[RMDB]
RNA sequence: GGGAACGACUCGAGUAGAGUCGAAAAGAUAUGGAUUGACGACAUGCUUGGAGUGUCGGAAACGACAUGGAAGAGCAACAGCGAUUCAAUCCUAAGUCAAAGCCAACAACGUUCGCGUUGUUGGCAAGGUUUACCCAAACUUCGGUUUGGGUAAACCAAAAGAAACAACAACAACAAC
Reactivity to DMS in 0.01 (KOAc 150mM, MgCl2 10mM, bicine 150mM(pH8.5), 24C), signal-to-noise 2, nucleotides 027 to 126: g000a050u010a300u010g000g000a020u000u000g000a040c020g000a130c120a220u000g020c000u000u000g010g020a300g000u000g000u000c000g000g000a060a030a190c000g050a000c000a000u000g020g000a300a190g000a010g010c000a030a060c210a200g050c030g000a190u000u000c000a000a000u000c000c000u000a070a030g000u020c030a140a150a090g000c000c000a010a000c000a000a000c000g020u020u000c190g010c020g000u000u000g010u000u000g000g000c040a000a000
Reactivity to 2A3 in 0.01 (KOAc 150mM, MgCl2 10mM, bicine 150mM(pH8.5), 24C), signal-to-noise 1, nucleotides 027 to 126: g020a050u060a060u110g000g020a010u000u010g010a000c040g000a030c070a090u080g000c000u010u000g050g030a020g010u010g000u000c020g010g060a040a050a000c010g000a000c010a000u040g210g160a010a030g020a010g090c020a020a030c040a090g090c020g200a270u100u070c000a020a000u000c010c010u030a130a000g020u070c070a070a060a040g000c000c000a000a000c000a020a000c000g030u110u120c230g010c010g230u020u030g000u040u000g000g030c000a000a000
The record gives the reactivity of an RNA of 177 nucleotides to DMS and 2A3. The RNA was probed in 150 mM KOAc, 10 mM MgCl2 and 150 mM bicine (pH 8.5) at 24 C. For DMS, 868 sequencing reads were counted. The 2A3 profile rests on 2,019 reads. For DMS the reverse transcriptase was MarathonRT.